[RMDB]
The record gives the reactivity of an RNA of 177 nucleotides to DMS and 2A3. It was measured as part of the RMDB libraries RFM100 and RFMREP. The RNA was probed in 150 mM KOAc, 10 mM MgCl2 and 150 mM bicine (pH 8.5) at 24 C. In probing experiments dimethyl sulfate is read out at A N1 and C N3, which are open when not base-paired. Values cover nucleotides 27 to 126.

RNA sequence: GGGAACGACUCGAGUAGAGUCGAAAAACGAUCCUCAUAGUGUACGCACUAUGAGGAUCGAACCAACUUCAGCUACAGUGUUAGCUAAGUUUGACAGUAGGUCAUGGUUACGACCAUGACCUACUGACUUCAGGAUCGCAUUCGUGCGAUCCUGAAGAAAAGAAACAACAACAACAAC
Reactivity to DMS in 0.01 (KOAc 150mM, MgCl2 10mM, bicine 150mM(pH8.5), 24C), signal-to-noise 1, nucleotides 027 to 126: a120c050g070a000u000c000c000u000c000a000u000a010g050u020g000u000a100c300g030c000a000c000u000a020u020g000a010g000g000a030u000c000g010a020a060c040c000a030a000c100u000u000c180a010g000c030u000a010c020a300g040u040g010u110u000a000g030c000u000a000a020g000u000u000u060g030a290c050a040g000u000a000g010g010u000c000a000u000g000g030u000u000a100c240g010a020c000c000a000u000g030a000c000c000u010a000c000u000g000a020
Reactivity to 2A3 in 0.01 (KOAc 150mM, MgCl2 10mM, bicine 150mM(pH8.5), 24C), signal-to-noise 5, nucleotides 027 to 126: a000c020g010a000u000c000c000u000c000a000u000a010g000u010g030u050a060c270g030c170a000c000u000a000u000g000a000g000g000a000u000c010g000a000a000c000c000a010a000c000u030u090c140a000g020c000u000a010c030a270g160u100g080u300u000a010g000c000u010a010a010g010u020u060u180g090a050c000a000g000u000a010g000g010u000c000a000u010g010g010u030u030a060c210g040a010c050c000a000u000g000a000c000c000u000a000c000u000g000a000